[RMDB]
RNA sequence: GGGAACGACUCGAGUAGAGUCGAAAAGAAAAAGCGGAAGUGGCGAAAUCGGUAGACGCAGUUGAUCAAAGAUCAACCGUAGAAAUACGUGCUGGUUCGAGUCCAGCCUUCCGCACCGUAAAAAAAAGCAAAUAACUUACUUCGGUAAGUUAUUUGCAAAAGAAACAACAACAACAAC
Reactivity to DMS in 0.01 (KOAc 150mM, MgCl2 10mM, bicine 150mM(pH8.5), 24C), signal-to-noise 1, nucleotides 027 to 126: g050a100a040a040a200a080g010c000g010g010a030a000g010u000g000g000c000g000a010a000a000u000c230g020g000u000a030g000a260c040g000c050a160g000u000u000g010a010u010c020a110a190a100g010a040u010c000a000a000c030c000g000u000a000g010a130a100a030u000a000c020g000u000g000c010u000g000g030u000u000c020g010a300g000u030c000c000a020g000c010c020u000u000c000c000g010c000a120c020c000g030u010a000a000a000a010a000a020a110a070
This 177-nucleotide RNA was probed chemically with DMS. The RNA was probed in 150 mM KOAc, 10 mM MgCl2 and 150 mM bicine (pH 8.5) at 24 C. Values cover nucleotides 27 to 126. Source: RMDB library M2PK90, as collected in RNAgym.